[RMDB]
RNA sequence: GGGAACGACUCGAGUAGAGUCGAAAAUCUGGCCCGUGACAUAGAUGCGCUGGAAUCUGCUAUUCACACAGCCCAUGACAGAUUCGAUGCUGUAGAAAUUCUACAACCGACGAUCGCGAGCGGGGUCGAAGAGGUAACUAGACUCGCCGAAUCAUUACAUAAUUGCGAUGUUCGCAUCGCAAUUAUGAAAAGAAACAACAACAACAAC
Reactivity to DMS in 0.01 (KOAc 150mM, MgCl2 10mM, bicine 150mM(pH8.5), 24C), signal-to-noise 2, nucleotides 027 to 156: u010c040u010g010g060c000c000c030g020u020g020a110c080a120u000a100g010a090u010g000c120g000c010u010g010g020a030a070u010c000u010g040c030u020a160u000u000c040a190c090a250c130a090g030c020c020c010a100u000g010a090c010a030g010a070u000u020c000g000a140u000g010c020u010g050u000a020g020a060a140a200u000u010c040u000a000c000a040a050c010c030g020a160c080g020a020u000c050g000c080g000a160g030c030g030g000g040g010u000c070g120a100a050g030a120g000g030u000a050a050c050u000a120g000a070c020u000c020g000c020c030g010a120a200u000c010a070u000u030a130
Reactivity to 2A3 in 0.01 (KOAc 150mM, MgCl2 10mM, bicine 150mM(pH8.5), 24C), signal-to-noise 4, nucleotides 027 to 156: u040c020u030g030g010c000c000c010g040u070g030a060c050a050u170a060g090a090u080g010c020g010c060u070g030g030a030a060u010c040u050g050c100u120a110u180u160c060a030c000a010c030a130g040c010c040c000a030u080g050a060c030a030g040a040u050u040c010g020a040u100g010c020u020g020u010a000g060a090a250a040u180u000c010u030a020c000a040a050c030c030g050a060c020g030a080u070c070g020c020g090a040g000c020g030g040g010g010u010c010g000a100a010g050a040g090g060u030a030a020c030u020a030g040a050c000u010c030g010c000c010g040a020a000u030c010a030u080u120a000